[RMDB]
RNA sequence: GGGAACGACUCGAGUAGAGUCGAAAAUCAGAGUGAGGGAGGCCCUGGGGGUCAGGGUAAGCGUCAGUCAGGGAGGCAAGACUUUGUGGGGAUUUCCUAGACAGGGCCAAGGCACCCCCAGCUCACCCGCUUACGUUGAAUUCGUUCAACGUAAGCGAAAAGAAACAACAACAACAAC
Reactivity to 2A3 in 0.01 (KOAc 150mM, MgCl2 10mM, bicine 150mM(pH8.5), 24C), signal-to-noise 1, nucleotides 027 to 126: u120c020a020g100a000g040u030g010a120g030g010g050a050g020g060c070c000c020u010g020g000g000g030g030u060c070a010g090g000g040u070a050a050g070c080g100u050c050a010g040u030c010a000g040g000g000a000g040g020c070a150a000g080a070c050u200u260u200g170u240g050g030g000g020a050u060u090u040c000c010u050a010g010a060c030a000g020g040g000c030c030a000a060g030g000c040a040c010c010c000c000c000a000g060c010u010c010a030c020c000
Reactivity to DMS in 0.01 (KOAc 150mM, MgCl2 10mM, bicine 150mM(pH8.5), 24C), signal-to-noise 1, nucleotides 027 to 126: u000c060a140g000a040g040u010g010a100g000g010g030a210g000g050c000c040c010u000g010g020g010g000g040u010c020a080g000g000g020u020a090a090g000c050g040u010c100a030g020u000c070a140g030g000g000a090g020g010c120a100a060g020a090c130u000u010u000g020u000g020g000g010g010a190u000u000u010c030c000u010a100g000a060c080a040g010g030g010c000c020a050a080g000g000c170a080c030c000c010c000c000a110g000c000u010c040a090c040c030
Background: This 177-nucleotide RNA was probed chemically with 2A3 and DMS. Reactivities are given for positions 27 through 126. High DMS reactivity at an A or C suggests that its Watson-Crick edge is free. It was measured as part of the RMDB library OK2TRN. For 2A3, 1,100 sequencing reads were counted.